The record gives the reactivity of an RNA of 177 nucleotides to 2A3 and DMS.
DMS (dimethyl sulfate) methylates the pairing face of unpaired adenines and cytosines.
RNA sequence: GGGAACGACUCGAGUAGAGUCGAAAAAGCAGGUUGCAAGCAAGGACUAAACCCCAGGCGUUUGAGCAGCCUAGCAGCAACCAGAGAUUUCAGUCCUGACUAUGCCCCAGCCGAAACAUCAGCUCGGCAUGACGAUUAUAUUCGUAUAAUCGUCAUGAAAAGAAACAACAACAACAAC
Reactivity to 2A3 in 0.01 (KOAc 150mM, MgCl2 10mM, bicine 150mM(pH8.5), 24C), signal-to-noise 9, nucleotides 027 to 126: a000g070c050a020g000g020u030u020g010c030a050a040g020c020a040a090g060g010a060c050u170a070a120a150c020c010c000c010a040g090g030c060g030u130u200u170g070a050g010c030a010g010c000c000u020a040g010c020a000g010c000a010a020c010c000a010g020a010g010a110u060u180u170c060a040g040u020c000c010u030g030a060c020u060a060u190g020c000c000c000c000a020g020c010c010g060a090a100a030c040a130u170c030a030g030c020u000c000g010g010
Reactivity to DMS in 0.01 (KOAc 150mM, MgCl2 10mM, bicine 150mM(pH8.5), 24C), signal-to-noise 9, nucleotides 027 to 126: a070g010c050a070g000g010u000u010g010c020a080a100g020c040a090a040g000g000a070c050u010a070a080a130c210c060c030c040a070g010g000c040g020u010u020u030g010a070g010c050a080g000c010c010u000a070g030c030a120g000c090a060a080c040c020a070g010a120g010a090u010u010u020c110a070g000u010c010c010u010g010a090c090u010a060u020g000c010c010c010c030a080g010c010c010g000a050a070a080c150a090u030c120a100g010c070u000c020g000g000

For DMS the reverse transcriptase was MarathonRT. Source: RMDB library OK1LIB, as collected in RNAgym. The RNA was probed in 150 mM KOAc, 10 mM MgCl2 and 150 mM bicine (pH 8.5) at 24 C. Values cover nucleotides 27 to 126.